[RMDB]
RNA sequence: GGGAACGACUCGAGUAGAGUCGAAAAUGUUAUUGGAUGCUGGAUGGUCACGUUGGAGACUGCAUGUGGCAGUCUUGAAACGUGUGGUUUGACGUCUAUCCAUUAUGGCAGUGGGUGGAGUACUGCACACGUUAUACGCGUUCGCGCGUAUAACGUGAAAAGAAACAACAACAACAAC
Reactivity to 2A3 in 0.01 (KOAc 150mM, MgCl2 10mM, bicine 150mM(pH8.5), 24C), signal-to-noise 3, nucleotides 027 to 126: u100g010u030u030a130u070u090g040g010a020u050g060c130u050g050g030a040u030g000g090u040c010a000c020g000u020u040g070g000a000g000a000c020u000g020c040a090u250g050u180g300g000c000a000g000u020c000u010u020g020a070a020a000c020g000u000g000u040g030g030u050u040u160g040a020c020g060u010c010u020a030u020c000c020a000u060u090a120u110g080g000c010a020g010u020g000g010g070u230g020g020a190g030u090a020c030u020g040c050a030
Reactivity to DMS in 0.01 (KOAc 150mM, MgCl2 10mM, bicine 150mM(pH8.5), 24C), signal-to-noise 3, nucleotides 027 to 126: u010g010u000u010a060u000u000g020g000a060u010g030c110u000g000g010a070u000g020g010u010c020a020c010g010u000u000g000g000a040g000a020c000u000g010c010a240u000g010u010g010g040c000a020g010u000c020u000u000g000a090a040a000c020g020u000g010u010g000g000u000u000u010g020a100c060g010u010c020u000a040u000c050c010a030u010u010a110u000g010g000c060a030g020u010g000g000g020u010g000g010a180g030u000a050c030u000g010c030a210
Structure probing data (2A3 and DMS) for a 177-nucleotide construct.
For DMS the reverse transcriptase was MarathonRT.
Source: RMDB library OK2TRN, as collected in RNAgym.
For 2A3 the reverse transcriptase was SuperScript II with manganese.
For 2A3, 2,435 sequencing reads were counted.